RNA sequence: GGGAACGACUCGAGUAGAGUCGAAAAGAUAUGGAGUUGUGGACAUGAUUUAAGGGUCGGAAACGACCUGGAGAUCAACAGCCACACCUCCUAAGUCAAAACAGUGCGGUGUUCGCACCGCACUGAACACACCGUCUAAGUUCGCUUAGACGGUGUGAAAAGAAACAACAACAACAAC
Reactivity to DMS in 0.01 (KOAc 150mM, MgCl2 10mM, bicine 150mM(pH8.5), 24C), signal-to-noise 3, nucleotides 027 to 126: g020a010u000a300u000g000g010a030g020u000u000g010u000g010g050a060c130a260u000g000a000u010u000u000a300a270g000g000g030u000c020g010g010a070a060a240c000g010a000c000c010u000g000g010a180g020a010u010c010a000a040c300a160g000c010c000a020c020a000c060c000u000c000c000u000a020a060g000u000c020a090a110a090a290c020a000g020u010g000c010g000g030u000g000u000u000c270g020c020a000c020c000g000c010a020c000u020g010a030a130
Reactivity to 2A3 in 0.01 (KOAc 150mM, MgCl2 10mM, bicine 150mM(pH8.5), 24C), signal-to-noise 2, nucleotides 027 to 126: g040a020u070a030u130g010g000a010g000u020u010g030u000g010g010a070c070a210u150g040a020u020u060u060a030a060g010g010g000u000c000g000g000a090a050a060c010g000a000c000c000u000g000g000a070g010a000u000c010a040a030c080a030g020c010c000a000c000a000c000c000u000c000c000u000a100a030g090u020c030a000a000a130a210c010a020g010u000g000c030g010g000u010g020u080u180c280g030c160a010c000c000g000c010a000c000u000g000a040a000